This 177-nucleotide RNA was probed chemically with 2A3 and DMS.

RNA sequence: GGGAACGACUCGAGUAGAGUCGAAAAGAUAUGGAACGGGGAGCGAAGAACGUACUGGAUCGGAAACGAUCUUACGGGAGCUUGCACGUUCCUAAGUCAAACUCAUUCGACUUCGGUCGAAUGAGAACGAAUCGGACUAGUUCGCUAGUCCGAUUCGAAAAGAAACAACAACAACAAC
Reactivity to 2A3 in 0.01 (KOAc 150mM, MgCl2 10mM, bicine 150mM(pH8.5), 24C), signal-to-noise 1, nucleotides 027 to 126: g000a010u030a020u100g000g020a020a000c010g000g010g090g030a020g000c010g100a300a100g000a140a000c000g010u050a030c160u160g070g020a010u020c030g000g050a000a010a000c000g010a000u000c000u010u000a000c010g040g000g060a090g000c000u030u150g080c150a130c060g000u020u010c000c010u000a010a010g000u000c020a070a010a150c010u000c000a010u020u010c000g000a000c010u030u080c300g160g000u020c000g020a000a000u000g000a010g010a010a010
Reactivity to DMS in 0.01 (KOAc 150mM, MgCl2 10mM, bicine 150mM(pH8.5), 24C), signal-to-noise 1, nucleotides 027 to 126: g000a030u000a060u000g010g040a050a040c000g000g000g000g010a040g000c000g010a120a150g020a140a190c000g030u000a010c300u020g000g000a030u000c000g010g000a020a010a060c010g010a000u010c000u000u000a010c010g010g040g000a050g000c000u000u000g030c070a220c000g000u000u000c000c020u000a000a100g000u000c040a110a110a260c030u000c000a020u000u000c000g000a030c000u000u000c190g040g000u000c000g000a020a000u010g000a010g000a010a080
Description: The RNA was probed in 150 mM KOAc, 10 mM MgCl2 and 150 mM bicine (pH 8.5) at 24 C. For DMS the reverse transcriptase was MarathonRT.